[RMDB]
RNA sequence: GGGAACGACUCGAGUAGAGUCGAAAAGAUAUGGAGACAUCGCUCUCAACAGCUACGAAUCGGAAACGAUUCAGUAGACAUGAGGCGAUGUCUCCUAAGUCAAAAGGCCCUUGUUCGCAAGGGCCAACUAUUUGCUAUAGUUCGCUAUAGCAAAUAGAAAAGAAACAACAACAACAAC
Reactivity to 2A3 in 0.01 (KOAc 150mM, MgCl2 10mM, bicine 150mM(pH8.5), 24C), signal-to-noise 4, nucleotides 027 to 126: g010a010u040a010u060g000g000a010g000a000c000a000u000c000g000c030u180c010u010c300a300a170c110a160g010c000u000a000c000g000a000a000u010c010g010g000a010a020a000c020g000a000u000u010c020a030g000u000a000g020a030c140a300u300g010a010g000g000c000g000a000u000g000u000c000u000c000c000u000a000a000g000u000c000a000a020a020a040g010g000c010c010c000u000u000g070u050u070c300g000c160a000a010g000g000g000c000c000a000a000
Reactivity to DMS in 0.01 (KOAc 150mM, MgCl2 10mM, bicine 150mM(pH8.5), 24C), signal-to-noise 8, nucleotides 027 to 126: g000a030u000a140u010g000g000a020g010a010c000a000u000c000g010c010u020c020u000c020a080a060c270a200g000c000u000a000c010g000a010a000u000c000g010g000a040a030a090c000g010a020u000u000c000a090g040u000a000g000a030c050a300u010g010a020g000g010c000g000a010u000g000u000c000u000c000c000u000a000a040g000u000c010a080a080a120a110g020g010c000c000c000u000u000g010u000u020c230g020c000a010a000g000g000g020c000c000a010a030

Background:
Conditions: 150 mM KOAc, 10 mM MgCl2 and 150 mM bicine (pH 8.5), 24 C. Chemical mapping of a 177-nucleotide RNA with 2A3 and DMS. Values cover nucleotides 27 to 126. For 2A3, 21,179 sequencing reads were counted. For DMS, 20,828 sequencing reads were counted. The data come from the RNA Mapping Database (RMDB), library TTRDES. For DMS the reverse transcriptase was MarathonRT.